This 177-nucleotide RNA was probed chemically with DMS. Conditions: 150 mM KOAc, 10 mM MgCl2 and 150 mM bicine (pH 8.5), 24 C.
RNA sequence: GGGAACGACUCGAGUAGAGUCGAAAACGGUGCACAAAUCAGAUAUGCAGUUGCCUUUAUAUGCCAGUUUUAAAGUUAUAGAAAAUGGUGUGCUAAGAGAUGUGUCUGUUACUGAUGCAUGCUUCGCAACAACCUCAGGUUUCGACCUGAGGUUGUUAAAAGAAACAACAACAACAAC
Reactivity to DMS in 0.01 (KOAc 150mM, MgCl2 10mM, bicine 150mM(pH8.5), 24C), signal-to-noise 1, nucleotides 027 to 126: c020g020g010u000g020c010a020c020a070a280a070u000c060a040g000a060u020a040u010g040c010a070g010u010u000g000c020c030u040u000u000a050u010a040u000g010c000c000a000g000u000u010u000u010a020a140a140g020u000u020a110u010a160g000a000a020a030a060u000g000g030u000g000u000g030c170u020a050a020g000a030g010a080u000g020u000g000u010c010u010g020u020u010a050c050u010g000a050u000g010c190a060u010g010c020u010u000c130g010c150